[RMDB]
Description:
Structure probing data (DMS and 2A3) for a 177-nucleotide construct. The 2A3 profile rests on 13,015 reads. 2A3 adducts were read by reverse transcription with SuperScript II with manganese. For DMS the reverse transcriptase was MarathonRT.
RNA sequence: GGGAACGACUCGAGUAGAGUCGAAAAGAUAUGGACGUCGUGAGCUCAACAGCUUAAUCGGAAACGAUUAAGACAUGAGCAUCACACGUCCUAAGUCAAACUGACUAGUGGUUCGCCACUAGUCAGAGAUAUGCGAUUGGUUCGCCAAUCGCAUAUCAAAAGAAACAACAACAACAAC
Reactivity to DMS in 0.01 (KOAc 150mM, MgCl2 10mM, bicine 150mM(pH8.5), 24C), signal-to-noise 4, nucleotides 027 to 126: g030a040u010a300u010g000g000a000c000g000u000c250g030u000g020a050g000c000u000c000a030a090c300a220g000c000u000u000a010a000u010c000g000g000a150a090a240c010g020a020u000u000a000a010g000a030c100a220u000g000a010g010c000a130u000c000a000c010a010c010g000u010c010c000u000a010a060g010u020c020a070a130a230c020u000g000a010c010u010a010g030u000g000g010u000u010c300g030c010c000a010c000u000a000g000u000c000a000g000a070
Reactivity to 2A3 in 0.01 (KOAc 150mM, MgCl2 10mM, bicine 150mM(pH8.5), 24C), signal-to-noise 5, nucleotides 027 to 126: g030a010u080a040u180g010g000a000c030g020u170c130g000u100g000a000g000c000u010c020a060a170c060a200g060c010u020u010a000a000u010c010g020g020a070a060a050c010g010a010u010u010a000a000g020a020c040a160u090g010a000g000c050a160u020c000a010c000a000c000g000u000c010c000u010a040a010g020u000c050a060a020a110c000u010g000a000c000u000a010g010u000g130g090u050u070c300g060c100c010a000c000u000a010g010u000c000a000g000a000
The RNA was probed in 150 mM KOAc, 10 mM MgCl2 and 150 mM bicine (pH 8.5) at 24 C.